The record gives the reactivity of an RNA of 177 nucleotides to 2A3 and DMS. The RNA was probed in 150 mM KOAc, 10 mM MgCl2 and 150 mM bicine (pH 8.5) at 24 C. 2A3 adducts were read by reverse transcription with SuperScript II with manganese. Values are in units of 0.01, from 0 to 300, in steps of 10.
RNA sequence: GGGAACGACUCGAGUAGAGUCGAAAAGAUAUGGAGCAAUGGAGCGUGCUAAGACAGUAACUCGGAAACGAGUUAUCGAGCAUCGCGAUGAAAUUGCUCCUAAGUCAAAGGCUUGUUCGCAAGCCAACAUACCACACUGGUUCGCCAGUGUGGUAUGAAAAGAAACAACAACAACAAC
Reactivity to 2A3 in 0.01 (KOAc 150mM, MgCl2 10mM, bicine 150mM(pH8.5), 24C), signal-to-noise 5, nucleotides 027 to 126: g000a000u070a020u150g010g000a000g000c010a010a000u020g010g010a040g020c000g020u000g000c020u140a220a040g090a080c050a040g020u020a000a010c000u000c010g010g020a050a050a030c000g010a000g000u010u000a020u060c020g010a000g000c000a020u300c130g000c010g010a030u040g010a030a020a010u010u010g000c000u000c000c000u010a050a020g020u020c050a150a050a020g000g000c010u010u030g030u120u120c300g030c150a000a000g000c000c000a000a000
Reactivity to DMS in 0.01 (KOAc 150mM, MgCl2 10mM, bicine 150mM(pH8.5), 24C), signal-to-noise 7, nucleotides 027 to 126: g010a040u000a300u000g000g000a020g000c010a010a010u000g000g010a070g010c010g040u010g010c030u000a160a120g010a090c300a090g000u000a000a010c000u010c000g000g010a100a070a130c010g010a000g010u000u000a010u000c030g000a020g000c010a010u010c050g020c010g000a060u020g010a050a050a020u000u000g000c000u000c000c010u000a010a070g010u000c030a100a090a110g000g000c000u010u000g010u000u010c210g020c020a010a010g000c010c010a070a140